[RMDB]
RNA sequence: GGGAACGACUCGAGUAGAGUCGAAAAUGGUCGUGCGGGUUCACGAAGAGGUCGGCCACCUGACUCAGGGCACCGGUGAGGCCCGAGGUGACCAUGGGAAGGGAGAUGCGAUCAGGGGGUACGUCCGUAAGAUACCCGGUUUCGACCGGGUAUCUUAAAAAGAAACAACAACAACAAC
Reactivity to DMS in 0.01 (KOAc 150mM, MgCl2 10mM, bicine 150mM(pH8.5), 24C), signal-to-noise 1, nucleotides 027 to 126: u000g010g050u000c010g040u010g060c000g010g000g000u000u000c010a050c030g000a110a110g020a150g010g000u000c080g000g000c070c070a090c000c000u000g010a170c070u010c070a060g020g030g010c080a040c020c080g000g020u000g000a070g040g010c000c000c000g020a030g000g010u000g010a010c000c010a080u000g020g000g000a120a070g000g000g000a120g010a190u020g000c150g000a060u010c040a040g010g000g000g000g040u000a090c070g040u010c100c080g000

The data come from the RNA Mapping Database (RMDB), library OK2TST. Structure probing data (DMS) for a 177-nucleotide construct. For DMS the reverse transcriptase was MarathonRT. The RNA was probed in 150 mM KOAc, 10 mM MgCl2 and 150 mM bicine (pH 8.5) at 24 C.